Structure probing data (DMS and 2A3) for a 207-nucleotide construct.
[RMDB]
RNA sequence: GGGAACGACUCGAGUAGAGUCGAAAAGCGAGUUAAAUAAUGUGUGAUUAUGCCACCUUCUAAGUCAUUAAACCAUUUACAUGAUAUUAUCUUAUCGAUUAUCAAUGGAUAGCAUGCUAGUAUCCAAACUGUCAUUGGUAUGAUAUCUGUAGUAUAGCAAAUGUGCGGAUUUCGAUCCGCACAUUUGAAAAGAAACAACAACAACAAC
Reactivity to DMS in 0.01 (KOAc 150mM, MgCl2 10mM, bicine 150mM(pH8.5), 24C), signal-to-noise 1, nucleotides 027 to 156: g000c050g000a150g010u000u000a070a050a090u000a040a050u010g030u000g010u010g010a190u000u010a060u010g000c000c020a120c060c010u000u000c050u000a070a040g000u000c040a050u000u000a070a090a130c010c030a140u010u000u000a050c070a090u040g010a120u010a050u000u000a100u000c030u000u020a050u000c040g000a200u030u000a050u020c030a050a040u010g070g070a050u000a000g020c020a120u010g040c070u000a070g020u000a120u010c010c000a040a110a070c030u010g010u000c030a080u000u000g000g040u000a000u000g030a050u000a020u000c030u000g000u000a100g020u000a140u000a010g050
Reactivity to 2A3 in 0.01 (KOAc 150mM, MgCl2 10mM, bicine 150mM(pH8.5), 24C), signal-to-noise 3, nucleotides 027 to 156: g080c030g010a040g040u090u110a090a120a100u100a050a070u060g080u050g000u000g030a090u050u150a060u070g020c010c010a020c000c010u080u020c060u130a100a060g040u040c030a060u090u090a130a080a100c010c000a060u060u010u090a050c040a030u160g010a000u020a020u090u010a020u010c040u050u060a050u110c020g030a030u000u090a040u170c040a030a030u010g040g010a000u010a030g150c040a000u100g030c070u110a040g010u030a030u020c010c000a040a040a060c050u030g010u000c020a020u010u050g020g000u060a020u050g010a020u020a010u000c010u040g090u030a030g050u030a130u140a140g040
Description:
Conditions: 150 mM KOAc, 10 mM MgCl2 and 150 mM bicine (pH 8.5), 24 C. 2A3 adducts were read by reverse transcription with SuperScript II with manganese.